[RMDB]
RNA sequence: GGGAACGACUCGAGUAGAGUCGAAAAUGAGCGAGGAGACGCUCGAUGAACUGUAUGACUUCAAACGCCGCGGCGACAGUUACGAGGAUGUGAUUCAACGACUGAUCGACACUCAACGGAGGACGACCGAUGAGUAAUCAAACGCAUCUCCGCGACCCGUCUCAAGUAGGUUCGCCUACUUGAGACGAAAAGAAACAACAACAACAAC
Reactivity to 2A3 in 0.01 (KOAc 150mM, MgCl2 10mM, bicine 150mM(pH8.5), 24C), signal-to-noise 2, nucleotides 027 to 156: u200g010a010g000c020g000a040g060g040a040g060a030c030g020c030u020c070g040a070u120g040a060a050c050u010g030u150a100u160g100a040c040u040u030c130a140a060a100c110g030c040c030g020c080g020g000c010g030a020c020a050g000u020u050a020c060g010a050g040g000a030u030g070u040g100a160u120u160c040a070a000c030g060a020c030u060g000a170u070c010g060a030c050a000c060u010c010a040a090c040g040g010a020g110g050a100c020g050a040c020c020g030a070u030g000a000g050u040a010a140u090c080a050a030a100c060g010c000a000u030c000u000c000c000g030c030g010a070c000c060